[RMDB]
RNA sequence: GGGAACGACUCGAGUAGAGUCGAAAAUACUACUACUUUUCAUCUCUUUUUCACUGAAAUGUCGAGUAUUUUUGCGAUGCAUGGUAAAGAAAUCAAGGUGACCAGGUUUCUUUUCAAUUUUCCCCCAUUGGGUAGGAAAAUUCGUUUUCCUACCCAAAAAAGAAACAACAACAACAAC
Reactivity to 2A3 in 0.01 (KOAc 150mM, MgCl2 10mM, bicine 150mM(pH8.5), 24C), signal-to-noise 2, nucleotides 027 to 126: u080a010c020u020a040c000u000a000c000u080u040u030u010c050a070u030c070u030c120u110u120u000u070u130c050a090c110u060g070a030a010a060u070g020u000c000g000a000g020u000a010u010u020u000u010u060g090c080g100a020u070g020c080a030u080g020g080u100a040a010a000g040a010a040a000u020c010a090a090g030g050u080g070a090c020c040a020g000g020u050u000u020c000u000u030u040u000c000a030a060u000u000u000u150c000c010c000c010c010a050
Reactivity to DMS in 0.01 (KOAc 150mM, MgCl2 10mM, bicine 150mM(pH8.5), 24C), signal-to-noise 5, nucleotides 027 to 126: u010a040c010u000a110c020u020a050c030u000u000u010u010c030a050u010c100u010c070u010u010u030u020u010c110a090c160u000g000a040a020a010u010g000u000c080g020a130g010u000a000u000u000u000u000u000g020c040g000a050u010g010c080a040u000g010g010u030a050a020a040g000a000a000a000u000c020a060a130g010g000u020g010a080c040c060a100g020g020u010u000u000c000u000u010u000u010c060a070a080u010u010u010u010c010c010c000c110c130a150